[RMDB]
RNA sequence: GGGAACGACUCGAGUAGAGUCGAAAAGUAAUAGAUAGCGGGAUGACGAGAAAGGGUGCGCUGAUAUCCUGUACGAAUGCUAGCAGUAAAUAGAAUAGCGCUCCUAAUACAACUAGCAACAAAAGGAUAAGGUAUCGUGAUGUCAAUCACAUUGCGACGCGGGAUAUAUAUUCGUAUAUAUCCCGCGAAAAGAAACAACAACAACAAC
Reactivity to DMS in 0.01 (KOAc 150mM, MgCl2 10mM, bicine 150mM(pH8.5), 24C), signal-to-noise 2, nucleotides 027 to 156: g010u010a020a120u000a090g020a090u000a140g030c040g000g000g000a090u010g020a170c120g010a140g020a110a160a150g000g030g040u010g000c080g030c070u110g000a160u000a100u040c000c040u020g000u000a220c090g030a060a150u000g010c010u000a030g040c010a210g030u010a050a090a170u000a050g020a060a140u010a060g050c090g090c050u040c050c010u000a120a150u000a040c030a090a070c010u010a060g000c030a000a170c130a070a090a070a040g000g000a070u010a030a170g000g030u000a050u000c020g030u000g030a040u000g010u000c010a080a100u000c170a030c020a030u010u010g000c000g000a110
Reactivity to 2A3 in 0.01 (KOAc 150mM, MgCl2 10mM, bicine 150mM(pH8.5), 24C), signal-to-noise 2, nucleotides 027 to 156: g030u050a020a160u070a170g050a030u090a010g010c010g020g030g030a030u090g030a050c050g020a040g090a140a060a000g020g000g000u040g000c050g000c000u000g010a010u000a020u110c010c000u020g050u050a040c070g060a130a060u050g030c000u010a000g010c030a010g040u090a030a000a080u170a140g120a090a090u050a050g040c020g000c010u010c010c000u000a040a030u070a010c000a070a080c010u010a030g000c030a010a040c000a010a110a020a010g020g010a010u060a050a090g060g000u030a010u030c010g000u020g010a000u010g030u060c060a030a050u180c000a000c000a000u000u000g000c010g030a000